[RMDB]
This 177-nucleotide RNA was probed chemically with DMS and 2A3.
2A3 is a SHAPE reagent: it acylates the 2'-hydroxyl of flexible nucleotides of all four kinds.
RNA sequence: GGGAACGACUCGAGUAGAGUCGAAAAAUAGGGAAUCUGAACUGUCCCCUCCAAGGGACACAGAGCCUCAGGCAGGGCCACAGGUGCACCUGUUUUGUGCAGAGGGCUCAAGCAGCCCUGGAGACAGCUCCACACUAGUUUUCGAACUAGUGUGGAGAAAAGAAACAACAACAACAAC
Reactivity to DMS in 0.01 (KOAc 150mM, MgCl2 10mM, bicine 150mM(pH8.5), 24C), signal-to-noise 3, nucleotides 027 to 126: a070u010a090g000g010g010a120a080u020c020u010g020a120a130c160u000g000u010c000c000c000c040u010c170c180a090a060g030g000g010a010c020a090c060a100g010a070g020c030c010u000c090a090g000g030c070a050g000g000g000c030c020a250c170a080g030g000u000g020c100a130c010c020u000g010u000u000u000u000g040u020g010c130a190g000a080g000g020g000c000u000c000a060a070g020c110a070g020c000c000c000u010g000g000a100g000a160c140a070g010
Reactivity to 2A3 in 0.01 (KOAc 150mM, MgCl2 10mM, bicine 150mM(pH8.5), 24C), signal-to-noise 2, nucleotides 027 to 126: a010u150a040g000g000g040a050a120u040c050u060g040a050a130c060u040g020u020c000c010c000c000u050c030c030a080a110g040g000g000a010c000a010c000a070g020a020g030c000c000u010c030a030g030g110c020a010g030g020g020c010c020a110c050a190g100g060u110g010c030a140c110c010u010g020u010u090u080u080g070u060g020c040a020g010a080g120g000g000c010u020c060a030a020g060c040a010g030c060c030c000u010g020g000a040g000a030c100a010g030